[RMDB]
RNA sequence: GGGAACGACUCGAGUAGAGUCGAAAACAGAGGAUGGGGCCUCUUCUCCAGCGCUGUAACCAAAUCGUUCGAGGACGUAAACGAAACGGUUAUUAAGCCUCACGUCCAGCAAUGGCAAUCCGGAGAACUACCGAGGAUACUUCGGUAUCCUCGGUAGAAAAGAAACAACAACAACAAC
Reactivity to DMS in 0.01 (KOAc 150mM, MgCl2 10mM, bicine 150mM(pH8.5), 24C), signal-to-noise 1, nucleotides 027 to 126: c150a080g030a020g020g000a110u010g030g010g010g000c020c040u000c020u000u000c040u020c020c020a080g010c210g060c060u010g000u010a010a060c000c040a020a230a100u000c100g030u000u000c100g020a130g000g030a050c160g010u000a020a020a060c040g000a030a040a190c300g000g000u000u020a010u010u000a110a130g030c020c020u000c090a070c130g000u000c010c070a080g040c220a010a070u000g030g000c040a060a160u000c040c000g010g010a100g010a080a180